This 177-nucleotide RNA was probed chemically with DMS and 2A3. The data come from the RNA Mapping Database (RMDB), library TTRDEL. DMS adducts were read by reverse transcription with MarathonRT. The reactions ran in a buffer of 150 mM KOAc, 10 mM MgCl2 and 150 mM bicine (pH 8.5), at 24 C.

RNA sequence: GGGAACGACUCGAGUAGAGUCGAAAAGAUAUGGAUCCCUAGUGAGCCAACAGCUCGGAAACGAGACAUGGCUCCUAGUGGAUCCUAAGUCAAAAGUCAAACCAGGUCUUCGGACCUGGUUUGACAAGUUGUAUCUGAACUUCGGUUCAGAUACAACAAAAGAAACAACAACAACAAC
Reactivity to DMS in 0.01 (KOAc 150mM, MgCl2 10mM, bicine 150mM(pH8.5), 24C), signal-to-noise 3, nucleotides 027 to 126: g000a060u000a300u010g000g010a010u000c000c000c010u000a010g020u020g010a010g000c020c010a040a090c260a190g010c010u000c000g000g000a090a090a210c000g000a010g000a040c110a230u000g000g000c000u000c010c000u000a000g000u010g030g000a010u000c000c010u000a010a090g010u000c030a070a070a100a080g010u000c000a010a010a010c000c000a010g000g000u000c000u000u020c240g030g000a020c000c000u000g000g000u000u000u000g000a000c000a030a050
Reactivity to 2A3 in 0.01 (KOAc 150mM, MgCl2 10mM, bicine 150mM(pH8.5), 24C), signal-to-noise 2, nucleotides 027 to 126: g020a020u060a030u130g010g000a000u040c020c000c000u000a030g030u070g300a010g000c000c000a080a040c060a270g020c020u020c000g000g020a060a050a000c000g000a000g030a040c060a100u060g000g000c010u000c000c000u000a000g000u160g000g000a000u000c010c000u000a020a010g020u000c030a070a070a030a080g000u000c000a000a000a020c010c000a000g000g040u000c030u070u270c300g070g000a000c000c000u000g030g000u000u000u000g000a000c000a010a000